[RMDB]
RNA sequence: GGGAACGACUCGAGUAGAGUCGAAAAGAUAUGGACUAUCACGAUGAACUUGGAUUUAUCGGAAACGAUUGUCAGUUCGCGUGAGUAGUCCUAAGUCAAAAGUCGACCGCCUUCGGGCGGUCGACAACAUCUUGUAUGCGUUCGCGCAUACAAGAUGAAAAGAAACAACAACAACAAC
Reactivity to DMS in 0.01 (KOAc 150mM, MgCl2 10mM, bicine 150mM(pH8.5), 24C), signal-to-noise 1, nucleotides 027 to 126: g010a040u010a300u010g000g010a010c000u000a030u000c000a010c010g010a100u000g010a000a010c010u000u000g040g010a030u010u020u010a010u010c000g000g010a220a140a170c000g010a030u000u000g010u000c000a030g000u010u000c010g040c000g000u020g030a030g020u010a000g010u000c000c000u010a010a110g000u000c040a120a100a210a070g000u010c010g000a030c000c010g000c000c010u000u010c180g050g010g130c000g000g030u010c020g000a020c010a020a150